RNA sequence: GGGAACGACUCGAGUAGAGUCGAAAAGCUUUAGAAUAUAUUACCUGUGUGACUAAGAGAGGAUUCUCUUUUGGGAAGGCACCUGUGACAGAUGAGAUGUAUUUCCAGUGAUCUGAGAGUAGUGAGUCAUAAAUAGGACAGGUAAAUUUCUACUCUACACGGACUAACAGUUCGCUGUUAGUCCGUGAAAAGAAACAACAACAACAAC
Reactivity to 2A3 in 0.01 (KOAc 150mM, MgCl2 10mM, bicine 150mM(pH8.5), 24C), signal-to-noise 1, nucleotides 027 to 156: g010c020u090u180u120a040g040a090a070u180a020u070a100u130u000a030c000c000u000g000u030g000u020g060a020c020u070a050a000g010a000g030a050g220g070a170u300u000c000u000c000u060u060u060u040g020g000g030a000a040g050g000c040a070c010c030u040g000u070g130a110c080a170g040a040u080g020a160g020a100u070g070u050a200u010u040u050c070c010a010g020u050g150a110u040c030u070g020a000g020a000g110u070a020g020u020g070a020g000u010c000a010u040a090a090a020u160a070g010g050a000c000a010g010g000u010a000a000a000u050u060u000c000u000a050c020u030c000u000a010
Overview
Structure probing data (2A3) for a 207-nucleotide construct. The data come from the RNA Mapping Database (RMDB), library OK3TST. The RNA was probed in 150 mM KOAc, 10 mM MgCl2 and 150 mM bicine (pH 8.5) at 24 C.